[RMDB]
RNA sequence: GGGAACGACUCGAGUAGAGUCGAAAACAGUUCAAAGGGAAUGUCUGCCAUGCUUUCACUUUAGAGGCAAUAAUUGACAUAUCUGCAUAUAACGAGCGAACAGUCAAAGGCGUUCCGGCAUGGCUGCCAGGGAUAGGGACUUCGGUCCCUAUCCCUGAAAAGAAACAACAACAACAAC
Reactivity to 2A3 in 0.01 (KOAc 150mM, MgCl2 10mM, bicine 150mM(pH8.5), 24C), signal-to-noise 2, nucleotides 027 to 126: c070a000g030u210u210c050a030a000a090g150g030g000a030a010u040g010u040c000u000g030c050c000a070u100g000c040u200u240u140c040a110c070u170u150u060a120g000a030g030g040c040a020a000u130a100a040u000u060g020a040c020a020u160a050u070c090u130g010c090a000u300a000u000a240a000c070g030a050g000c000g000a010a010c040a130g050u030c000a020a010a020g030g030c040g030u050u000c000c000g000g030c090a000u020g000g000c000u000g070c020
Reactivity to DMS in 0.01 (KOAc 150mM, MgCl2 10mM, bicine 150mM(pH8.5), 24C), signal-to-noise 2, nucleotides 027 to 126: c140a120g020u020u130c040a000a030a060g000g000g000a050a010u010g010u030c000u020g000c050c130a070u000g010c000u040u000u000c020a150c210u000u000u040a120g000a070g000g000c060a020a130u060a110a080u000u000g000a000c020a010u000a080u000c030u000g010c000a070u010a100u010a100a100c300g000a040g000c000g010a000a040c150a050g000u000c030a000a070a050g050g010c000g000u000u000c000c060g000g000c020a180u000g000g050c010u000g000c100
Structure probing data (2A3 and DMS) for a 177-nucleotide construct. The DMS profile rests on 2,030 reads. It was measured as part of the RMDB library OK1LIB. The reactions ran in a buffer of 150 mM KOAc, 10 mM MgCl2 and 150 mM bicine (pH 8.5), at 24 C. 2A3 adducts were read by reverse transcription with SuperScript II with manganese. For DMS the reverse transcriptase was MarathonRT. The 2A3 profile rests on 1,152 reads.